Structure probing data (2A3 and DMS) for a 177-nucleotide construct. For DMS, 1,789 sequencing reads were counted.

[RMDB]
RNA sequence: GGGAACGACUCGAGUAGAGUCGAAAAAUUUGUUGUCGACCGGGCGGACAUAUUAGUAUCUGUUAAAGGGUCGCCGUCUACUCUCAUCGUUCUUUUGUGUACAAAUUUUUUAAAGGAGCGAUGUUGAACCAUUCUAUAGGUUCGCCUAUAGAAUGGUAAAAGAAACAACAACAACAAC
Reactivity to 2A3 in 0.01 (KOAc 150mM, MgCl2 10mM, bicine 150mM(pH8.5), 24C), signal-to-noise 1, nucleotides 027 to 126: a000u130u070u070g000u070u070g090u060c070g000a060c010c090g080g010g040c020g000g040a030c030a010u180a100u160u090a030g040u070a170u020c060u090g020u030u040a160a050a000g000g000g030u040c010g000c020c000g040u000c000u000a020c010u000c000u000c000a000u000c000g010u020u000c000u000u000u000u000g130u000g010u010a020c040a030a140a020u170u140u050u240u300u300a000a080a080g030g010a000g000c000g010a000u010g010u030u000g000a000
Reactivity to DMS in 0.01 (KOAc 150mM, MgCl2 10mM, bicine 150mM(pH8.5), 24C), signal-to-noise 2, nucleotides 027 to 126: a090u000u000u020g010u000u000g000u010c010g010a110c050c060g000g000g000c000g000g010a040c080a060u000a140u010u000a140g030u010a050u010c020u010g010u000u010a060a090a150g010g000g020u000c020g020c090c040g020u010c020u000a080c120u000c020u000c030a010u000c020g010u000u000c010u000u000u000u020g010u020g000u010a150c200a060a060a030u000u000u000u000u010u000a010a040a040g000g000a010g020c010g000a020u000g000u000u000g010a100